[RMDB]
RNA sequence: GGGAACGACUCGAGUAGAGUCGAAAACGCCGAUGCUCACAAGCGGGCGGUGCGUGCCCUCGGAUCCCGAUACCCUACUCCGGCUUACGCCCCCGACGCUCGUGUUCGCUGGGCUCGUCAGCUCGCCAUUCGAGUGAUCAUUCGUGAUCACUCGAAUAAAAGAAACAACAACAACAAC
Reactivity to DMS in 0.01 (KOAc 150mM, MgCl2 10mM, bicine 150mM(pH8.5), 24C), signal-to-noise 3, nucleotides 027 to 126: c120g010c040c030g000a120u010g010c030u020c070a080c240a120a130g030c060g000g000g000c030g020g000u000g020c050g010u000g000c020c030c050u000c050g020g000a090u000c020c010c020g000a060u010a100c060c010c020u000a100c070u000c020c030g000g010c060u010u000a110c130g000c030c020c020c020c030g000a080c080g030c010u000c040g000u000g000u000u000c060g020c090u000g010g010g010c010u000c040g010u020c060a190g020c020u000c030g020c030c120
Reactivity to 2A3 in 0.01 (KOAc 150mM, MgCl2 10mM, bicine 150mM(pH8.5), 24C), signal-to-noise 1, nucleotides 027 to 126: c060g000c000c020g080a140u120g030c020u040c040a140c030a190a080g040c050g010g030g000c020g000g000u100g060c030g040u030g000c010c000c020u040c010g070g000a070u070c040c030c030g000a110u130a210c020c010c020u020a100c030u030c050c020g000g000c070u090u090a060c030g040c000c020c000c000c000g030a020c020g000c020u080c010g000u010g100u120u030c040g030c070u030g050g000g000c000u010c030g040u020c000a000g000c010u000c030g040c030c000

Structure probing data (DMS and 2A3) for a 177-nucleotide construct. For DMS the reverse transcriptase was MarathonRT. It was measured as part of the RMDB library OK2TRN. The 2A3 profile rests on 1,955 reads. The RNA was probed in 150 mM KOAc, 10 mM MgCl2 and 150 mM bicine (pH 8.5) at 24 C.